[RMDB]
RNA sequence: GGGAACGACUCGAGUAGAGUCGAAAAUGAAACUGACGGUUCCUCUUCAAGUCGUGGAUGUCUGAAGAGCGAGAGAUCUCGCAAAGAUCAUGCCAGCACGUCAUCAACAAGAACUGUUCGUGCACCAGUAGGACCCCUAGUUCGCUAGGGGUCCUACAAAAGAAACAACAACAACAAC
Reactivity to 2A3 in 0.01 (KOAc 150mM, MgCl2 10mM, bicine 150mM(pH8.5), 24C), signal-to-noise 2, nucleotides 027 to 126: u040g000a010a020a030c160u140g110a050c020g100g000u260u050c030c000u090c080u200u000c070a160a150g020u000c020g130u000g260g020a070u120g000u000c000u130g060a010a020g030a000g110c020g030a010g000a000g000a100u020c000u000c000g200c110a020a020a060g050a020u020c020a020u100g060c000c020a000g020c050a070c030g070u130c000a050u020c040a000a230c000a180a000g010a040a060c040u020g010u110u030c000g000u000g070c040a040c090c060a000